[RMDB]
Record summary
An RNA of 207 nucleotides, treated with 2A3 and read out base by base. 2A3 adducts were read by reverse transcription with SuperScript II with manganese.

RNA sequence: GGGAACGACUCGAGUAGAGUCGAAAACACGGAACCGAUUGAGCGCGUAGAGGAGGGCGGCAACACGGUACGGUACAAGUCGCUUAAGCUCCUAUCGCCGGGGGUAUGGUCCGACGCGGGAAGUCAGACGGCGACGUAUUACCCGCCCGAUGGGAUCGAACGUCAUGCAAUUCGUUGCAUGACGUUCAAAAGAAACAACAACAACAAC
Reactivity to 2A3 in 0.01 (KOAc 150mM, MgCl2 10mM, bicine 150mM(pH8.5), 24C), signal-to-noise 2, nucleotides 027 to 156: c090a000c030g010g010a010a040c030c030g060a100u050u090g040a070g050c100g020c020g050u150a070g000a050g060g000a010g010g010g010c020g010g020c070a120a030c000a020c150g090g010u160a010c040g000g030u020a000c010a030a180g010u000c010g000c030u000u080a020a000g010c000u010c000c010u190a200u200c020g010c060c000g030g000g040g010g030u090a050u190g010g050u060c010c010g030a010c050g020c030g060g000g010a110a050g090u170c040a000g010a090c050g020g010c030g000a010c000g010u000a040u020u110a090c010c010c040g020c030c000c000g000a020u040g000g000g030a040u080c120